The data come from the RNA Mapping Database (RMDB), library RFMREP. An RNA of 177 nucleotides, treated with DMS and 2A3 and read out base by base. DMS (dimethyl sulfate) methylates the pairing face of unpaired adenines and cytosines. The reactions ran in a buffer of 150 mM KOAc, 10 mM MgCl2 and 150 mM bicine (pH 8.5), at 24 C. The 2A3 profile rests on 1,438 reads. The DMS profile rests on 1,885 reads. 2A3 adducts were read by reverse transcription with SuperScript II with manganese.
RNA sequence: GGGAACGACUCGAGUAGAGUCGAAAAUGAUCGCCAGGGUUGAUUCGGCUGAUCUGGCUGGCUAGGCGGGUGUCCCCUUCCUCCCUCACCGCUCCAUGUGCGUCCCUCCCGAAGCUGCGCGCUCGGUGGGAUAGUAAUUGUUCGCAAUUACUAUCCCAAAAGAAACAACAACAACAAC
Reactivity to DMS in 0.01 (KOAc 150mM, MgCl2 10mM, bicine 150mM(pH8.5), 24C), signal-to-noise 2, nucleotides 027 to 126: u020g010a080u000c090g010c010c010a120g030g000g010u010u000g000a210u000u000c070g010g040c050u020g000a040u000c030u000g020g020c050u010g010g000c070u000a080g010g000c020g000g000g000u000g000u000c010c020c020c070u000u010c020c010u010c020c030c010u000c040a100c060c040g000c040u010c030c050a060u000g000u010g000c070g010u000c030c010c000u000c050c000c010g020a070a060g020c020u000g020c060g030c080g030c040u000c050g010g060u000
Reactivity to 2A3 in 0.01 (KOAc 150mM, MgCl2 10mM, bicine 150mM(pH8.5), 24C), signal-to-noise 1, nucleotides 027 to 126: u090g000a000u030c020g020c000c040a090g070g070g000u170u080g120a180u170u060c010g040g000c050u060g020a090u040c040u060g050g020c040u000g030g010c050u040a060g060g040c030g050g070g000u060g050u050c010c000c020c020u070u020c000c000u040c040c000c010u010c000a070c000c030g000c000u000c010c020a110u110g030u010g060c010g000u010c010c000c000u050c020c000c010g010a060a000g000c040u030g020c040g000c010g000c050u000c000g000g050u040